Record summary: Chemical mapping of a 177-nucleotide RNA with DMS and 2A3. Values cover nucleotides 27 to 126. It was measured as part of the RMDB libraries RFM100 and RFMREP. The RNA was probed in 150 mM KOAc, 10 mM MgCl2 and 150 mM bicine (pH 8.5) at 24 C.

[RMDB]
RNA sequence: GGGAACGACUCGAGUAGAGUCGAAAAUGUUUACAGCACCUCUCACAUCCAGGGAAACCCCACCCUGGCGCUCACUCUUAGUAACACUUCCUAGUAGGUAUUAGGUGGUAAGCCGAGCUCUUCCUCGUAUUAUCAUGAUAUUCGUAUCAUGAUAAUAAAAAGAAACAACAACAACAAC
Reactivity to DMS in 0.01 (KOAc 150mM, MgCl2 10mM, bicine 150mM(pH8.5), 24C), signal-to-noise 9, nucleotides 027 to 126: u020g010u010u010u010a070c090a100g010c030a060c030c020u000c030u000c040a080c100a110u010c030c020a030g010g010g010a040a100a200c040c010c010c040a160c010c010c010u000g010g010c240g020c030u000c030a040c020u010c030u010u010a060g010u010a050a080c100a060c050u000u000c020c030u000a060g010u010a080g010g010u010a040u010u010a040g000g020u010g000g000u010a060a130g010c040c020g000a060g010c050u000c040u000u000c010c010u000c130g010
Reactivity to 2A3 in 0.01 (KOAc 150mM, MgCl2 10mM, bicine 150mM(pH8.5), 24C), signal-to-noise 9, nucleotides 027 to 126: u080g020u020u060u060a060c040a020g020c010a020c000c010u020c010u020c010a030c010a100u040c010c000a010g000g000g030a080a100a120c020c010c000c000a020c010c000c000u000g000g000c010g020c000u020c000a040c000u030c010u050u090a030g020u100a120a020c020a030c060u070u050c010c000u020a050g040u040a030g120g080u110a110u110u070a090g010g020u040g020g030u040a050a010g010c010c010g010a010g000c010u010c000u050u020c000c010u030c020g010